Notes: This 177-nucleotide RNA was probed chemically with 2A3 and DMS. The reactions ran in a buffer of 150 mM KOAc, 10 mM MgCl2 and 150 mM bicine (pH 8.5), at 24 C. The data come from the RNA Mapping Database (RMDB), library OK2TRN. DMS adducts were read by reverse transcription with MarathonRT. 2A3 adducts were read by reverse transcription with SuperScript II with manganese.

RNA sequence: GGGAACGACUCGAGUAGAGUCGAAAAAAGCAAAUAACACGAGUCUUAUUUAAGAUAUCCGGAGAAUCUCUCUCUACAGACAGCGGGAAUCGAAUUGACGAAGUUCGUUUAUCGAGAUUAGUGGCAGCACGUCAUUUGUUUUCGAACAAAUGACGUGAAAAGAAACAACAACAACAAC
Reactivity to 2A3 in 0.01 (KOAc 150mM, MgCl2 10mM, bicine 150mM(pH8.5), 24C), signal-to-noise 1, nucleotides 027 to 126: a020a000g110c100a070a060a050u160a110a040c050a010c050g020a070g010u060c010u090u120a220u050u190u140a040a000g000a020u000a070u000c070c010g040g000a020g020a150a150u020c020u000c000u000c010u000c010u080a020c000a030g080a020c000a000g010c030g010g010g020a000a050u100c070g030a040a060u120u090g040a030c000g030a080a000g100u030u050c000g050u040u000u050a050u030c100g040a040g010a060u010u070a030g020u020g020g000c000a000g050
Reactivity to DMS in 0.01 (KOAc 150mM, MgCl2 10mM, bicine 150mM(pH8.5), 24C), signal-to-noise 2, nucleotides 027 to 126: a080a080g020c110a070a030a080u030a090a160c030a030c090g000a110g000u000c020u020u010a110u010u000u010a040a110g010a070u000a100u000c090c070g000g000a090g030a050a100u010c100u010c150u000c030u000c020u050a100c180a070g020a070c130a050g010c050g010g000g010a060a080u000c010g010a040a090u000u000g030a090c130g010a070a050g010u000u000c010g000u000u000u030a060u010c020g000a060g010a030u000u000a100g020u000g010g010c130a070g000